[RMDB]
An RNA of 177 nucleotides, treated with DMS and 2A3 and read out base by base.
It was measured as part of the RMDB library M2PK50.
The DMS profile rests on 6,099 reads.
High DMS reactivity at an A or C suggests that its Watson-Crick edge is free.
Conditions: 150 mM KOAc, 10 mM MgCl2 and 150 mM bicine (pH 8.5), 24 C.
RNA sequence: GGGAACGACUCGAGUAGAGUCGAAAAUACGUGACCUUCGGGUCACGUAACCGGCGUUCCCAAGUCAAAAAGAGAGUCGCAAUCUCGACAGCGGCCUUUUCGUAUGAGUUGCUUUCGAGCAACUCAAGUGUAGAAUGAUGUUCGCAUCAUUCUACACAAAAGAAACAACAACAACAAC
Reactivity to DMS in 0.01 (KOAc 150mM, MgCl2 10mM, bicine 150mM(pH8.5), 24C), signal-to-noise 5, nucleotides 027 to 126: u010a010c000g020u000g000a010c000c000u000u020c210g040g010g020u010c000a000c000g010u010a020a060c080c040g000g010c020g000u000u000c010c000c000a150a150g010u010c160a040a070a080a040a020g010a060g000a110g020u000c020g010c020a100a080u000c070u000c070g010a100c210a100g010c020g020g000c020c020u000u000u000u000c090g020u000a120u000g000a010g010u000u000g010c000u000u000u010c170g020a020g000c010a010a000c000u000c000a010a020
Reactivity to 2A3 in 0.01 (KOAc 150mM, MgCl2 10mM, bicine 150mM(pH8.5), 24C), signal-to-noise 5, nucleotides 027 to 126: u040a000c000g000u000g000a000c000c010u010u030c280g040g000g000u000c010a000c000g000u000a000a000c020c000g060g010c010g000u010u020c000c000c000a010a020g200u150c060a070a060a060a080a020g060a010g010a040g020u010c000g000c030a020a110u030c040u040c140g050a090c040a020g000c010g000g000c000c000u030u030u040u110c090g030u120a110u170g000a000g000u010u010g000c010u060u070u160c250g090a010g000c000a000a000c000u000c000a000a000